[RMDB]
RNA sequence: GGGAACGACUCGAGUAGAGUCGAAAAGAUAUGGACUAGAGACUUUGGGUAACUAUAGCAACAGCCGUAUGUCGGAAACGACAUCACGGACAUGCUAUAGUUACCCAAAGUUGAUAGUCCUAAGUCAGGAUUAAUGGAUGUUCGCAUCCAUUAAUCCAAAAGAAACAACAACAACAAC
Reactivity to DMS in 0.01 (KOAc 150mM, MgCl2 10mM, bicine 150mM(pH8.5), 24C), signal-to-noise 1, nucleotides 027 to 126: g020a060u000a300u030g000g010a000c000u000a020g010a300g000a000c000u000u020u000g010g010g000u000a000a000c000u000a000u000a010g010c010a110a100c300a300g000c000c000g010u000a050u000g010u000c000g010g000a150a140a190c000g010a000c010a020u000c260a010c000g000g000a030c120a200u000g010c010u000a000u000a050g000u010u000a020c000c000c010a000a000a000g020u000u000g000a270u000a000g000u000c020c000u000a000a050g000u000c050a110